[RMDB]
RNA sequence: GGGAACGACUCGAGUAGAGUCGAAAAGAUAUGGAUAUAGGGAGUUGCGCUCGGAAACGAGCGAUAACGAAGAACUAUGAUCCUAAGUCAAAAGUUGCAUACCUGACUUCGGUCAGGUAUGCAACAACUAAUCACGGAAGUUCGCUUCCGUGAUUAGAAAAGAAACAACAACAACAAC
Reactivity to DMS in 0.01 (KOAc 150mM, MgCl2 10mM, bicine 150mM(pH8.5), 24C), signal-to-noise 3, nucleotides 027 to 126: g000a040u000a300u000g000g000a010u000a030u000a010g000g000g010a100g020u000u000g010c000g000c000u000c000g010g010a040a080a150c010g000a010g010c000g010a020u010a000a000c000g000a080a110g000a090a200c010u000a000u000g010a030u000c000c010u000a050a140g010u000c040a090a080a140a100g000u000u000g000c000a000u000a010c000c000u010g010a010c000u000u010c200g030g000u000c000a000g000g010u000a000u000g010c000a000a010c000a030a150